[RMDB]
The data come from the RNA Mapping Database (RMDB), libraries RFM100 and RFMREP. The record gives the reactivity of an RNA of 177 nucleotides to 2A3 and DMS.
RNA sequence: GGGAACGACUCGAGUAGAGUCGAAAAAGAGCGGUCUACGGACCGCUCAAGGGAUGUUGAGGUAGGCUCAGUAGAUGCGAGGAGAUCCACCAUUCCUCACAUCGUCUGUCCUAACUCGCCUUCCCAAGCUCAGAUACAACUUCGGUUGUAUCUGAGCAAAAGAAACAACAACAACAAC
Reactivity to 2A3 in 0.01 (KOAc 150mM, MgCl2 10mM, bicine 150mM(pH8.5), 24C), signal-to-noise 5, nucleotides 027 to 126: a000g010a000g010c000g000g000u000c020u030a080c300g080g000a000c000c000g010c000u000c000a010a000g000g000g000a050u090g030u170u220g040a010g020g000u010a000g010g000c040u000c050a010g010u050a080g030a010u010g010c030g000a000g010g000a060g020a100u140c100c030a060c040c030a130u060u050c010c000u000c000a020c000a000u000c000g050u010c000u000g000u010c000c000u010a020a010c000u000c000g040c000c010u020u000c010c000c000a000a020
Reactivity to DMS in 0.01 (KOAc 150mM, MgCl2 10mM, bicine 150mM(pH8.5), 24C), signal-to-noise 1, nucleotides 027 to 126: a080g020a000g050c000g010g050u000c000u010a140c270g000g000a030c000c000g050c000u010c030a000a020g050g000g000a060u000g000u040u000g030a000g010g000u000a000g000g020c050u000c000a010g020u010a230g010a000u000g040c000g000a000g050g030a010g000a200u010c200c130a080c260c130a170u020u000c000c000u000c000a040c000a000u000c000g000u000c000u000g040u000c000c010u010a020a000c000u000c010g010c060c000u000u000c000c000c000a040a160
Record summary: The DMS profile rests on 1,899 reads. For 2A3 the reverse transcriptase was SuperScript II with manganese. Conditions: 150 mM KOAc, 10 mM MgCl2 and 150 mM bicine (pH 8.5), 24 C.